[RMDB]
RNA sequence: GGGAACGACUCGAGUAGAGUCGAAAAGCACUGGAUUCGUCCAGUGCAAAAAAGCGUACUACUCAAGAGGUCCACAGGUAACUAUUCCCAAAUAGGAAUAGAAUCCUGGGACUACCCACCUUGAGUAUCGCAAAAAACGGUUACUUCGGUAACCGAACUAUAAGUAAAGCUUCGGCUUUACUUAUAGAAAAGAAACAACAACAACAAC
Reactivity to 2A3 in 0.01 (KOAc 150mM, MgCl2 10mM, bicine 150mM(pH8.5), 24C), signal-to-noise 2, nucleotides 027 to 156: g000c000a000c000u000g000g010a030u080u120c290g030u030c030c000a000g000u020g000c000a020a020a020a020a020a020g030c050g020u060a080c050u000a000c010u050c000a000a000g010a010g020g010u010c000c000a160c000a230g020g000u030a110a020c010u010a010u010u030c010c030c080a070a270a230u300a130g000g000a000a000u000a010g010a030a030u050c000c000u000g000g000g010a000c000u000a010c030c010c040a050c010c000u000u010g000a000g000u020a030u150c030g000c010a130a000a000a000a130a000c000g010g000u020u020a000c000u040u030c200g110g010u020a000a010c030c000g010a000a000
Reactivity to DMS in 0.01 (KOAc 150mM, MgCl2 10mM, bicine 150mM(pH8.5), 24C), signal-to-noise 1, nucleotides 027 to 156: g000c010a020c000u000g000g020a060u000u000c300g000u020c010c010a000g030u000g030c000a000a020a020a080a010a110g000c000g030u030a080c150u000a020c010u000c000a030a010g020a260g040g010u000c010c010a130c060a010g030g000u010a050a280c000u000a010u000u000c000c000c050a040a180a290u000a070g000g010a030a000u000a000g000a080a140u000c000c030u000g020g010g030a010c000u000a000c000c020c080a300c110c010u040u000g010a030g000u000a040u010c020g020c010a000a060a100a070a070a150c000g010g030u000u000a000c020u000u010c300g050g020u000a020a010c010c010g000a000a000